[RMDB]
RNA sequence: GGGAACGACUCGAGUAGAGUCGAAAAAGACGUGUACGCACGUCACACCGUGGCGGCGGUGUAAAACAAACAUUAAGUCGCCAGCGUCCCGGAACAAGGCAUUUUCCGAUUCUCCGGGGGUUGCAAAAAAACUGAACUUGGUUCGCCAAGUUCAGAAUCUACUAUCUUUGUUCGCAAAGAUAGUAGAAAAAGAAACAACAACAACAAC
Reactivity to DMS in 0.01 (KOAc 150mM, MgCl2 10mM, bicine 150mM(pH8.5), 24C), signal-to-noise 2, nucleotides 027 to 156: a080g000a000c000g050u000g030u000a090c210g030c030a010c000g020u000c010a100c000a090c020c010g020u010g070g120c000g080g090c030g040g020u000g030u000a040a040a080a200c200a150a130a110c040a070u000u000a090a160g040u000c010g050c020c000a100g020c100g010u000c000c000c000g010g010a010a060c090a120a140g000g010c100a170u010u010u000u000c020c000g010a270u000u000c040u000c040c030g000g000g020g010g020u000u000g010c000a010a000a120a090a080a100a100c010u000g000a030a010c000u010u000g000g010u000u000c300g050c020c010a010a020g010u000u000c000a000g010a030a080
Reactivity to 2A3 in 0.01 (KOAc 150mM, MgCl2 10mM, bicine 150mM(pH8.5), 24C), signal-to-noise 4, nucleotides 027 to 156: a000g000a000c010g000u010g010u060a040c200g010c130a000c000g010u000c010a000c010a010c000c010g070u040g000g000c020g000g010c000g000g020u010g020u040a090a130a020a020c100a040a150a000c020a020u090u150a160a020g020u010c000g000c000c010a000g010c000g030u030c000c000c000g010g000a030a040c060a070a060g060g030c080a080u070u070u170u110c020c010g050a070u130u020c030u020c060c000g000g000g000g030g020u220u110g000c030a040a060a020a000a000a010a060c000u000g000a010a000c000u000u010g010g000u040u040c050g030c060c000a000a000g000u000u000c000a000g000a000a020
This 207-nucleotide RNA was probed chemically with DMS and 2A3. Source: RMDB library M2RFPK, as collected in RNAgym. For 2A3, 3,892 sequencing reads were counted. The reactions ran in a buffer of 150 mM KOAc, 10 mM MgCl2 and 150 mM bicine (pH 8.5), at 24 C. The DMS profile rests on 4,110 reads. For DMS the reverse transcriptase was MarathonRT.